[RMDB]
RNA sequence: GGGAACGACUCGAGUAGAGUCGAAAAUCAUAGCUUCACCAGGGCGACCUGGUCCUCCACGAGCUGGCCCGCGGCCGCGAGCUCAGCUUUUACCUUCCCGCCCACCUCCUCGCGCAGGUACACCGAAUAUCCUACCAUAAUUCGUUAUGGUAGGAUAAAAAGAAACAACAACAACAAC
Reactivity to 2A3 in 0.01 (KOAc 150mM, MgCl2 10mM, bicine 150mM(pH8.5), 24C), signal-to-noise 3, nucleotides 027 to 126: u070c010a040u040a130g050c050u160u140c060a020c010c010a010g010g010g020c040g030a070c000c010u010g020g000u000c000c000u030c010c000a040c070g020a010g000c010u020g020g010c000c020c010g020c010g060g090c100c160g030c020g010a000g000c030u060c250a000g000c000u040u040u060u060a040c000c000u030u030c010c010c010g020c000c010c000a060c000c000u000c000c000u010c020g040c010g000c020a020g030g030u050a040c030a030c040c000g010a070a020
Reactivity to DMS in 0.01 (KOAc 150mM, MgCl2 10mM, bicine 150mM(pH8.5), 24C), signal-to-noise 8, nucleotides 027 to 126: u000c090a100u010a110g010c070u010u010c130a070c020c000a030g000g000g010c240g000a180c020c020u000g000g000u000c040c010u000c020c030a130c180g010a030g010c020u000g010g000c010c010c010g010c040g020g030c160c160g000c040g010a020g010c010u010c020a030g010c020u000u000u000u000a090c100c070u000u000c020c010c010g010c040c020c020a140c040c020u000c010c020u000c050g020c050g030c060a030g000g010u010a060c100a120c040c030g010a080a170

This 177-nucleotide RNA was probed chemically with 2A3 and DMS. Conditions: 150 mM KOAc, 10 mM MgCl2 and 150 mM bicine (pH 8.5), 24 C. Source: RMDB library M2PK90, as collected in RNAgym. For DMS, 13,323 sequencing reads were counted. 2A3 is a SHAPE reagent: it acylates the 2'-hydroxyl of flexible nucleotides of all four kinds.